Conditions: 150 mM KOAc, 10 mM MgCl2 and 150 mM bicine (pH 8.5), 24 C. Structure probing data (DMS and 2A3) for a 177-nucleotide construct. For 2A3 the reverse transcriptase was SuperScript II with manganese. Values cover nucleotides 27 to 126. DMS adducts were read by reverse transcription with MarathonRT.
RNA sequence: GGGAACGACUCGAGUAGAGUCGAAAAGAUAUGGACCGACCCACGCUUUUGACGCUCAGCGUUUCGGAAACGAAACGGAGCGAUAAGCGUGGUCGGUCCUAAGUCAAAAGUAUGGUUCGCCAUACAAGGUAGUUAAGCACUUCGGUGCUUAACUACCAAAAGAAACAACAACAACAAC
Reactivity to DMS in 0.01 (KOAc 150mM, MgCl2 10mM, bicine 150mM(pH8.5), 24C), signal-to-noise 1, nucleotides 027 to 126: g000a070u010a300u000g040g010a010c010c010g010a010c070c040c040a000c010g000c010u000u000u000u000g000a200c200g000c000u000c000a120g000c040g030u000u000u000c000g020g010a120a100a230c010g000a010a000a010c000g030g000a000g030c000g000a010u000a020a000g050c010g030u000g000g000u040c000g010g040u000c000c000u040a000a060g020u000c010a110a030a080a160g000u010a020u000g010g000u000u010c280g040c000c000a000u000a010c020a080a140
Reactivity to 2A3 in 0.01 (KOAc 150mM, MgCl2 10mM, bicine 150mM(pH8.5), 24C), signal-to-noise 1, nucleotides 027 to 126: g010a000u080a020u140g030g050a000c040c000g020a040c170c130c020a000c020g060c010u210u240u020u300g220a120c050g020c020u060c070a250g170c060g070u040u000u000c010g040g000a150a020a050c010g010a000a010a010c010g000g000a000g010c010g070a060u080a050a000g020c040g000u020g000g000u000c000g000g000u000c010c000u000a000a000g000u000c000a010a020a010a100g000u000a020u040g060g060u060u070c300g000c100c030a000u040a000c030a000a040